[RMDB]
RNA sequence: GGGAACGACUCGAGUAGAGUCGAAAAGAAUAUUGUAUCCAGAAGGUUCUCUCGGUGAACUAUCUCAGGUCUACGACUUUGAGAUUCCCUUGGGAACGCUUUACCAAACAGUCAAGGAUAUUUGCGACAUGUACGAUCUGGGUUUCCGCCUAGUUCGCUACUGGAAACCGUUCGCGGUUUCCAGUAGAAAAGAAACAACAACAACAAC
Reactivity to 2A3 in 0.01 (KOAc 150mM, MgCl2 10mM, bicine 150mM(pH8.5), 24C), signal-to-noise 1, nucleotides 027 to 156: g020a030a120u230a040u090u290g010u080a060u010c000c060a020g010a050a000g040g000u010u010c000u000c010u000c000g040g050u300g110a050a070c040u100a140u000c000u000c010a010g000g070u000c090u300a090c140g050a010c000u290u300u140g000a010g000a010u010u000c020c000c000u000u000g030g000g000a020a000c010g000c070u030u010u010a020c080c040a040a100a070c010a020g170u170c060a030a090g040g010a000u090a050u170u210u210g030c040g050a060c070a120u160g000u080a060c000g010a010u090c030u040g000g000g050u030u190u040c060c080g000c000c010u000a000g010u000u000c100g010